[RMDB]
The record gives the reactivity of an RNA of 177 nucleotides to DMS and 2A3. The reactions ran in a buffer of 150 mM KOAc, 10 mM MgCl2 and 150 mM bicine (pH 8.5), at 24 C. For DMS the reverse transcriptase was MarathonRT. It was measured as part of the RMDB library M2PK90.
RNA sequence: GGGAACGACUCGAGUAGAGUCGAAAAUAAAAGAGAGCGUGGUAGCACAAACCAGACCAAUGAUAAGUGCAUGGUCGCACAAGUACAGCUUCGCCUGUACAAAGCGAACAACAACAACAACAAAAAAGUAAUAGGACAUGUUCGCAUGUCCUAUUACAAAAGAAACAACAACAACAAC
Reactivity to DMS in 0.01 (KOAc 150mM, MgCl2 10mM, bicine 150mM(pH8.5), 24C), signal-to-noise 3, nucleotides 027 to 126: u020a070a040a080a120g010a070g000a040g000c090g030u000g000g030u010a080g000c030a030c030a060a080a100c030c020a100g010a140c050c080a060a040u000g020a130u010a040a130g020u000g000c040a150u000g000g000u000c010g030c010a060c150a070a120g020u000a010c000a000g010c020u030u000c240g020c190c000u000g000u000a010c010a050a100a090g000c010g000a030a030c020a030a070c010a000a060c020a030a020c060a020a020c060a020a050a090a050a030a080
Reactivity to 2A3 in 0.01 (KOAc 150mM, MgCl2 10mM, bicine 150mM(pH8.5), 24C), signal-to-noise 1, nucleotides 027 to 126: u020a000a050a020a010g150a020g010a020g030c120g030u040g000g040u040a030g070c030a020c020a050a110a020c030c010a020g080a020c010c060a060a080u130g050a040u070a200a060g040u030g050c030a030u060g070g010u030c020g000c000a060c020a200a000g000u010a010c010a000g010c010u080u190c100g050c030c000u000g000u010a010c000a010a050a020g050c040g030a010a000c020a010a000c000a000a000c000a000a010c000a010a020c020a030a110a030a020a010a000